Source: RMDB library OK2TRN, as collected in RNAgym. Chemical mapping of a 177-nucleotide RNA with DMS and 2A3. DMS adducts were read by reverse transcription with MarathonRT. For DMS, 874 sequencing reads were counted. For 2A3 the reverse transcriptase was SuperScript II with manganese. The RNA was probed in 150 mM KOAc, 10 mM MgCl2 and 150 mM bicine (pH 8.5) at 24 C. For 2A3, 671 sequencing reads were counted.
RNA sequence: GGGAACGACUCGAGUAGAGUCGAAAAAACGUCUAUUGGAUCGGCCAAAUUUAUUUCACCAGAGCAAGCGAGAGGAAAGGCUACCUAUGCUAGCGAUAUCUAUAGCCUGGGAUUAACCUGCGCGAACCUAGGUAGUGGGGUUCGCCCCACUACCUAGAAAAGAAACAACAACAACAAC
Reactivity to DMS in 0.01 (KOAc 150mM, MgCl2 10mM, bicine 150mM(pH8.5), 24C), signal-to-noise 1, nucleotides 027 to 126: a050a070c120g020u010c050u010a120u000u000g030g000a060u000c090g000g000c010c030a050a100a100u010u000u000a000u000u000u000c090a080c030c030a140g000a140g020c080a100a090g020c100g010a080g010a140g020g010a100a040a020g020g000c070u000a090c040c070u020a060u000g020c090u000a050g000c080g010a120u000a050u020c110u020a080u000a140g030c010c000u000g020g000g000a070u010u010a030a110c030c040u000g000c080g010c030g000a110a060c130
Reactivity to 2A3 in 0.01 (KOAc 150mM, MgCl2 10mM, bicine 150mM(pH8.5), 24C), signal-to-noise 1, nucleotides 027 to 126: a030a000c050g050u010c050u050a060u040u230g090g070a040u050c030g010g070c010c060a090a130a050u160u190u050a130u080u170u050c070a100c120c000a100g030a010g130c020a090a000g000c020g030a070g000a020g200g000a110a020a000g000g000c000u010a020c000c030u090a130u190g030c020u010a000g010c010g070a070u050a050u120c040u140a130u080a060g000c020c030u000g050g010g000a050u120u030a040a010c000c020u050g000c060g000c010g060a010a000c010